[RMDB]
Annotation:
Structure probing data (DMS and 2A3) for a 177-nucleotide construct. The RNA was probed in 150 mM KOAc, 10 mM MgCl2 and 150 mM bicine (pH 8.5) at 24 C. It was measured as part of the RMDB library OK2TRN. As a SHAPE reagent, 2A3 marks flexible, mostly unpaired nucleotides at the ribose 2'-OH. For 2A3, 934 sequencing reads were counted.
RNA sequence: GGGAACGACUCGAGUAGAGUCGAAAAACAUGCGGCUGUCACUGUAUAAACGAAUGCCUCGGAUACUGACGGAAUCAAAGGUUUCGCCCGUCGUAUAAGACUCACCAAGAAUGAGUUGAGAACGCAGACACCCCGUGUAUUUCGAUACACGGGGUGUAAAAGAAACAACAACAACAAC
Reactivity to DMS in 0.01 (KOAc 150mM, MgCl2 10mM, bicine 150mM(pH8.5), 24C), signal-to-noise 2, nucleotides 027 to 126: a070c130a040u000g030c140g020g030c000u010g000u000c040a030c120u000g020u120a110u000a040a010a110c080g060a060a100u010g020c070c080u000c110g000g000a070u000a020c040u030g000a030c030g000g000a030a040u000c070a060a140a090g020g000u000u000u000c040g000c030c000c040g040u010c010g000u000a050u000a070a180g040a010c030u000c030a010c080c090a120a080g000a080a240u010g000a030g010u000u000g000a210g000a080a080c070g030c100a160g000
Reactivity to 2A3 in 0.01 (KOAc 150mM, MgCl2 10mM, bicine 150mM(pH8.5), 24C), signal-to-noise 1, nucleotides 027 to 126: a000c080a040u040g020c000g000g070c050u000g070u110c040a080c060u020g060u110a050u120a180a230a010c050g020a080a030u190g000c020c000u070c020g040g000a040u080a090c030u090g020a010c010g010g000a010a050u020c060a140a030a000g100g000u010u050u040c000g030c000c000c010g040u020c040g000u020a060u020a120a020g020a000c020u000c020a030c040c050a100a000g070a140a090u020g010a000g020u010u000g040a040g000a030a030c040g000c000a010g050